[RMDB]
RNA sequence: GGGAACGACUCGAGUAGAGUCGAAAAGUCUCACGAGUGCACAGACAAAGGUAGUUGACUCCGGUGCUACCAGUACUCGAAUGAAUGCGAAAGAGUUCAAGUAUUCCAACCGGAGAAGAACUCAAAAGGAUAAUCACGUGUUCGCACGUGAUUAUCCAAAAGAAACAACAACAACAAC
Reactivity to DMS in 0.01 (KOAc 150mM, MgCl2 10mM, bicine 150mM(pH8.5), 24C), signal-to-noise 1, nucleotides 027 to 126: g000u000c000u000c000a150c090g050a000g040u000g000c020a080c280a200g040a140c300a020a180a000g000g000u000a000g040u000u000g000a110c070u000c000c000g000g000u000g000c000u010a000c000c000a090g010u000a000c000u000c000g000a240a010u080g010a040a130u000g000c020g000a150a140a010g010a040g000u020u000c010a160a300g000u010a080u000u000c150c050a090a020c040c000g040g000a000g000a040a140g000a000a000c000u000c020a210a140a040a230
Reactivity to 2A3 in 0.01 (KOAc 150mM, MgCl2 10mM, bicine 150mM(pH8.5), 24C), signal-to-noise 3, nucleotides 027 to 126: g050u010c000u000c030a040c020g000a000g000u010g010c060a090c090a110g300a180c070a160a040a010g040g010u000a000g000u000u020g050a100c000u010c000c000g000g000u000g000c020u030a000c000c000a000g010u000a000c000u000c060g000a030a090u140g080a080a020u070g040c070g130a150a160a090g000a020g010u030u060c080a070a020g060u020a170u190u230c140c050a000a000c000c010g000g000a030g010a000a020g010a010a010c040u020c010a040a030a000a050